Chemical mapping of a 177-nucleotide RNA with DMS and 2A3. DMS adducts were read by reverse transcription with MarathonRT. The RNA was probed in 150 mM KOAc, 10 mM MgCl2 and 150 mM bicine (pH 8.5) at 24 C.

RNA sequence: GGGAACGACUCGAGUAGAGUCGAAAAAUAGUGUUAUUCGUAACACUAUAUAUCCGAACUCAAGGAUUCGUUCCAGAGACAUGCAUGCUAGCAUCAAAGCAACUGAACAAGCGUUCGCGCUUGUUAAACCGUUAGUAUGAUUCGUCAUACUAACGGUAAAAGAAACAACAACAACAAC
Reactivity to DMS in 0.01 (KOAc 150mM, MgCl2 10mM, bicine 150mM(pH8.5), 24C), signal-to-noise 9, nucleotides 027 to 126: a010u000a000g010u000g000u000u000a010u000u010c180g020u000a000a010c010a010c000u000a000u000a040u010a110u010c140c020g000a060a060c010u000c010a090a190g010g000a030u000u000c000g010u000u000c000c000a100g010a130g010a090c180a040u010g010c040a060u010g010c090u000a080g010c030a050u000c150a050a090a080g010c080a070a090c160u010g000a030a020c000a010a010g010c000g020u010u010c250g030c010g010c000u000u000g000u000u000a030a090
Reactivity to 2A3 in 0.01 (KOAc 150mM, MgCl2 10mM, bicine 150mM(pH8.5), 24C), signal-to-noise 9, nucleotides 027 to 126: a000u010a010g000u000g010u010u010a030u040u070c240g040u040a010a000c000a000c000u000a000u000a000u000a010u010c060c020g020a180a070c010u010c030a040a070g120g000a020u010u020c010g000u010u000c000c000a010g030a010g010a110c100a050u090g040c010a010u090g060c050u080a060g020c020a080u110c070a090a070a050g040c020a030a080c070u150g050a020a000c020a010a000g000c000g030u060u090c230g000c010g000c070u010u000g000u010u020a090a070